[RMDB]
RNA sequence: GGGAACGACUCGAGUAGAGUCGAAAAGCGUACUACCUUCUUCUACAGAGCUUGGAUUUAUACAGUGUCUUAUCCCAAAUAGGAUAAGCCUGUAUUGUCAGCUCUGUUCUAGAAGGUAUCGCAAAACCUAGCAUAACGUUCGCGUUAUGCUAGGUAACCCUCGUGUGUCCUUCGGGACACACGAGGGAAAAGAAACAACAACAACAAC
Reactivity to 2A3 in 0.01 (KOAc 150mM, MgCl2 10mM, bicine 150mM(pH8.5), 24C), signal-to-noise 1, nucleotides 027 to 156: g010c020g010u120a120c010u000a010c030c010u000u080c000u000u000c040u040a000c000a010g000a000g020c030u250u180g170g000a080u200u300u160a000u060a000c000a020g010u030g080u060c030u010u000a000u010c020c000c000a240a300a300u300a190g000g000a000u000a000a000g000c010c000u000g000u010a000u000u000g030u000c000a010g000c070u010c000u000g000u000u000c020u000a000g000a000a000g000g000u000a000u030c000g040c000a040a040a040a040c000c000u000a000g000c000a000u000a000a000c000g060u070u020c300g040c010g130u010u010a000u000g000c000u000a010g000g000u000a010a010